Structure probing data (2A3 and DMS) for a 177-nucleotide construct. Values cover nucleotides 27 to 126. The DMS profile rests on 3,109 reads. The 2A3 profile rests on 4,897 reads. 2A3 adducts were read by reverse transcription with SuperScript II with manganese. The data come from the RNA Mapping Database (RMDB), library M2PK90. The RNA was probed in 150 mM KOAc, 10 mM MgCl2 and 150 mM bicine (pH 8.5) at 24 C.
[RMDB]
RNA sequence: GGGAACGACUCGAGUAGAGUCGAAAACACAGGCGACUUAAUCGGAGAGCGGUUACACGCGAGGAAGAUGAAAUUAUUACAUCAGUAGACUCGAGAUUACUACAUCUUGCGUUGCUAUCUCAAAUAACCAUCCUAACAUGUUCGCAUGUUAGGAUGGAAAAGAAACAACAACAACAAC
Reactivity to 2A3 in 0.01 (KOAc 150mM, MgCl2 10mM, bicine 150mM(pH8.5), 24C), signal-to-noise 5, nucleotides 027 to 126: c070a000c020a030g070g000c010g040a030c040u060u170a080a060u110c040g030g000a020g010a010g110c070g030g010u040u100a050c070a020c050g030c010g000a020g020g020a050a130g000a030u020g030a040a050a070u300u220a120u090u180a070c040a030u010c030a020g040u060a030g040a060c030u030c090g070a050g020a090u050u110a100c050u030a010c010a050u020c000u000u030g000c010g020u020u040g010c020u020a050u050c030u010c020a090a130a060u110a080a040
Reactivity to DMS in 0.01 (KOAc 150mM, MgCl2 10mM, bicine 150mM(pH8.5), 24C), signal-to-noise 4, nucleotides 027 to 126: c110a100c150a070g000g000c060g010a070c080u000u010a070a080u000c060g010g010a090g000a080g020c080g000g010u000u010a040c150a080c070g010c040g000a060g010g010a110a130g000a020u000g000a050a030a110u000u010a090u000u020a100c010a030u010c020a100g000u000a050g000a080c060u010c060g010a090g000a070u010u010a070c080u010a040c070a120u000c030u000u000g010c110g010u000u000g020c050u000a070u000c020u020c040a040a050a080u010a080a130